[RMDB]
RNA sequence: GGGAACGACUCGAGUAGAGUCGAAAAGGGAUAACCUCGGGAAACUGAGGCUAAUCCUGAAUAGCGUUCUCACCCUGGAGUGGGGAGAACGUGAAAUGCUCCGGCGCCAGAGGAUGUGGCUGCGGCCGACCUAGAUAUCGUUCGCGAUAUCUAGGUCAAAAGAAACAACAACAACAAC
Reactivity to 2A3 in 0.01 (KOAc 150mM, MgCl2 10mM, bicine 150mM(pH8.5), 24C), signal-to-noise 3, nucleotides 027 to 126: g010g000g000a010u020a020a020c010c000u000c000g000g000g000a030a050a030c010u010g000a000g010g000c000u050a070a080u000c010c000u000g020a010a070u020a020g000c000g000u010u000c050u060c060a300c000c000c030u120g210g210a220g150u190g040g020g000g000a020g010a000a000c000g000u000g000a020a020a010u110g020c010u010c040c020g050g020c030g000c010c010a040g010a050g190g040a090u150g080u040g090g020c050u060g030c000g060g000c020c070
Reactivity to DMS in 0.01 (KOAc 150mM, MgCl2 10mM, bicine 150mM(pH8.5), 24C), signal-to-noise 3, nucleotides 027 to 126: g000g000g010a010u040a090a090c000c010u000c010g010g000g000a160a070a240c000u000g010a030g000g020c000u000a080a080u000c000c000u000g000a080a040u000a260g000c000g010u010u000c010u010c000a140c000c000c000u010g010g030a140g030u020g010g000g010g010a000g000a010a000c000g000u000g000a060a080a070u000g000c050u000c040c050g010g010c070g020c020c020a060g010a110g010g000a110u000g010u000g010g010c020u000g020c070g010g010c100c060